An RNA of 207 nucleotides, treated with 2A3 and DMS and read out base by base. For 2A3 the reverse transcriptase was SuperScript II with manganese. Values are in units of 0.01, from 0 to 300, in steps of 10.

RNA sequence: GGGAACGACUCGAGUAGAGUCGAAAAACGGUGCGGAAGUUCGCGCUUCCGUGAAACGCGAAAAUCGGACGGUGGCUGCAAGUCGCAUCGCAAAACCGCGGCAAGUGGAGUUAGCGAGAGGAGGCGGAAACCAUCCAACACUUCGGUGUUGGAUGAAGAUUUCACAUCUGUUCGCAGAUGUGAAAUCAAAAGAAACAACAACAACAAC
Reactivity to 2A3 in 0.01 (KOAc 150mM, MgCl2 10mM, bicine 150mM(pH8.5), 24C), signal-to-noise 3, nucleotides 027 to 156: a000c030g010g000u040g000c000g020g030a050a020g040u120u170c080g020c020g010c060u020u010c000c010g000u020g040a090a080a010c080g040c020g060a070a080a020a060u120c020g010g020a010c050g010g040u040g040g010c060u080g010c070a050a050g030u050c010g010c020a050u020c020g010c060a040a050a010a010c060c020g010c010g040g000c080a110a050g010u050g050g030a060g020u080u150a020g040c010g050a000g010a040g000g040a020g020g000c000g010g030a070a030a000c010c000a000u010c000c000a000a000c000a000c000u060u140c210g070g000u000g010u000u000g000g000a000u000g000a010a000
Reactivity to DMS in 0.01 (KOAc 150mM, MgCl2 10mM, bicine 150mM(pH8.5), 24C), signal-to-noise 1, nucleotides 027 to 156: a030c030g030g010u000g000c020g030g010a030a100g020u020u010c240g020c140g030c000u000u000c030c110g040u000g020a060a070a050c010g070c020g000a020a050a130a100u000c050g010g030a070c000g010g000u000g020g000c010u020g030c030a070a160g050u000c020g040c000a100u000c010g000c020a070a040a130a130c000c000g000c040g010g010c090a100a130g030u000g000g000a180g000u000u010a070g030c060g040a090g000a090g000g000a110g000g030c030g010g000a090a070a080c090c000a000u000c000c000a010a000c010a010c000u000u000c300g030g050u000g020u000u010g000g010a020u000g000a050a060